[RMDB]
RNA sequence: GGGAACGACUCGAGUAGAGUCGAAAACUUGACCAGUCUUCUCGCCUAUUUGCCACGAAUACUGCGUCGUCAGGAUACACUUAUAGGCUUGUUAUGUCUGGAUUUGGACUCCUUGGCGGGUAGCAAACCAUGCUCCUAGAUUCGUCUAGGAGCAUGGAAAAGAAACAACAACAACAAC
Reactivity to 2A3 in 0.01 (KOAc 150mM, MgCl2 10mM, bicine 150mM(pH8.5), 24C), signal-to-noise 5, nucleotides 027 to 126: c010u050u110g040a020c000c000a010g010u000c010u010u020c010u010c020g000c000c000u040a060u030u070u060g030c010c020a070c020g030a060a020u080a110c040u070g010c020g180u080c040g060u080c050a020g000g010a010u030a050c040a000c010u010u020a030u020a020g000g000c000u010u060g150u060u160a160u250g030u020c030u020g010g020a040u030u010u060g010g010a040c020u020c020c000u040u070g050g000c020g010g020g020u030a030g010c000a000a000a010
Reactivity to DMS in 0.01 (KOAc 150mM, MgCl2 10mM, bicine 150mM(pH8.5), 24C), signal-to-noise 3, nucleotides 027 to 126: c070u030u040g000a060c030c020a020g000u000c020u000u000c020u000c100g000c020c040u010a060u030u000u000g010c050c070a060c160g020a120a100u010a060c010u000g000c040g020u040c130g010u060c030a010g020g010a060u020a060c250a120c020u000u000a000u010a070g000g000c010u020u040g020u010u010a070u030g020u020c000u010g000g010a090u000u000u010g000g000a090c090u000c030c020u020u030g020g000c060g000g010g000u000a070g010c080a080a040a190
This 177-nucleotide RNA was probed chemically with 2A3 and DMS. The reactions ran in a buffer of 150 mM KOAc, 10 mM MgCl2 and 150 mM bicine (pH 8.5), at 24 C. High 2A3 reactivity points to a flexible backbone, as in loops and unpaired stretches. Reactivities are given for positions 27 through 126. For 2A3 the reverse transcriptase was SuperScript II with manganese.